[RMDB]
RNA sequence: GGGAACGACUCGAGUAGAGUCGAAAAGCCUCUUAUGCAUAAGGGGGCUGCGUGGCCUAUUGUUAGACGACGUAUAGUGCAAAUGUUGUCAGACACUUUAGACAAAUUGUCUGAUUACUGUACGUUUAGACAGGAUGCUUCGGCAUCCUGAAAAGAAACAACAACAACAAC
Reactivity to 2A3 in 0.01 (KOAc 150mM, MgCl2 10mM, bicine 150mM(pH8.5), 24C), signal-to-noise 5, nucleotides 027 to 129: g010c030c010u040c020u050u140a110u160g110c060a120u140a230a130g020g010g000g000g030c020u030g000c050g090u140g030g050c010c000u050a120u160u150g060u050u110a080g020a090c030g000a000c000g030u020a020u000a000g040u060g060c080a090a080a110u250g060u210u100g020u010c010a000g000a000c000a030c040u030u030u050a080g070a110c130a060a080a030u030u000g000u000c000u000g000a000u000u110a000c010u000g000u000a010c000g000u000u000u020a000g010a030
Reactivity to DMS in 0.01 (KOAc 150mM, MgCl2 10mM, bicine 150mM(pH8.5), 24C), signal-to-noise 7, nucleotides 027 to 129: g000c010c000u030c010u020u010a060u030g050c230a100u040a150a100g040g020g030g030g040c030u020g010c110g020u030g000g000c030c040u000a090u060u030g010u010u040a090g000a140c150g020a020c020g030u010a030u000a020g030u020g040c220a080a090a100u060g040u040u050g040u000c030a000g010a030c000a020c210u020u010u070a100g070a190c180a010a010a010u000u000g010u000c010u010g020a050u040u060a000c020u050g050u000a080c060g020u010u020u040a060g000a130